Chemical mapping of a 207-nucleotide RNA with DMS and 2A3. High DMS reactivity at an A or C suggests that its Watson-Crick edge is free. High 2A3 reactivity points to a flexible backbone, as in loops and unpaired stretches. DMS adducts were read by reverse transcription with MarathonRT. Reactivities are given for positions 27 through 156.
[RMDB]
RNA sequence: GGGAACGACUCGAGUAGAGUCGAAAAGGAGGCUGAAGCGGGAGGAUCACUUGAGCCUAGGAGUUCUGGGCUGUGGUGUGCUAUGCCAAUCAGGUGUCUGCACUAAGUUUGACAUCAAUAUGGUGACCUCCCAGGAGCAAGGGACCACCAGGUUGCAGGUACCAUACUGAUUCGUCAGUAUGGUACCAAAAGAAACAACAACAACAAC
Reactivity to DMS in 0.01 (KOAc 150mM, MgCl2 10mM, bicine 150mM(pH8.5), 24C), signal-to-noise 1, nucleotides 027 to 156: g000g000a070g010g000c010u000g000a120a010g040c060g020g010g020a100g020g010a130u010c040a030c050u010u010g020a040g000c000c010u000a050g010g010a170g060u000u000c010u000g010g030g010c060u010g030u000g000g030u010g060u000g010c080u000a070u050g040c020c000a040a070u000c010a210g020g020u000g000u000c010u010g080c020a240c120u000a080a300g000u000u010u020g020a040c030a050u000c060a020a100u000a170u010g040g010u010g010a110c000c040u010c020c000c000a050g020g010a080g020c040a050a110g000g010g010a090c040c000a050c050c000a100g000g000u000u000g020c050a150
Reactivity to 2A3 in 0.01 (KOAc 150mM, MgCl2 10mM, bicine 150mM(pH8.5), 24C), signal-to-noise 5, nucleotides 027 to 156: g010g020a000g030g000c020u040g020a040a030g030c070g020g000g000a020g020g020a140u030c000a010c050u080u120g090a010g010c000c010u010a030g050g040a160g080u260u090c020u020g000g010g000c010u030g030u050g050g010u070g000u040g030c060u070a060u270g000c010c000a010a040u120c060a050g000g010u010g000u010c030u060g020c040a050c140u190a100a120g040u110u140u120g030a010c010a010u050c000a040a060u170a100u190g010g020u000g010a010c000c000u000c000c000c000a010g000g030a010g000c030a010a030g020g020g010a010c020c000a000c030c010a030g030g030u020u040g020c080a040